[RMDB]
RNA sequence: GGGAACGACUCGAGUAGAGUCGAAAAGGGUGAUGUCUCCUAACCUUUAUCAAUGGGGGCACUCGGUCGUGCUGUGGGUAGAAAUUUUAUUUCGUGCCUAUCUUAGACGCUUGUCGUCGGGAGUAUGUGGGACUGAUGAACUUCGGUUCAUCAGUAAUCUUAAUCGGGCUUUCGAGCCCGAUUAAGAAAAAGAAACAACAACAACAAC
Reactivity to 2A3 in 0.01 (KOAc 150mM, MgCl2 10mM, bicine 150mM(pH8.5), 24C), signal-to-noise 1, nucleotides 027 to 156: g110g000g000u090g030a160u050g000u030c060u030c030c010u090a120a060c010c010u120u190u140a150u300c100a050a070u170g000g000g040g040g000c000a000c060u060c040g000g000u050c010g000u040g040c020u120g010u050g010g000g000u060a030g150a000a030a020u250u260u100u110a090u000u100u200c070g000u070g050c000c000u020a000u000c010u000u090a120g010a070c040g000c050u120u170g060u280c010g000u000c000g000g050g000a020g040u110a060u080g030u070g020g020g060a000c000u010g000a010u000g000a000a000c030u050u020c130g120g000u000u010c020a000u000c000a000g000u000a000a000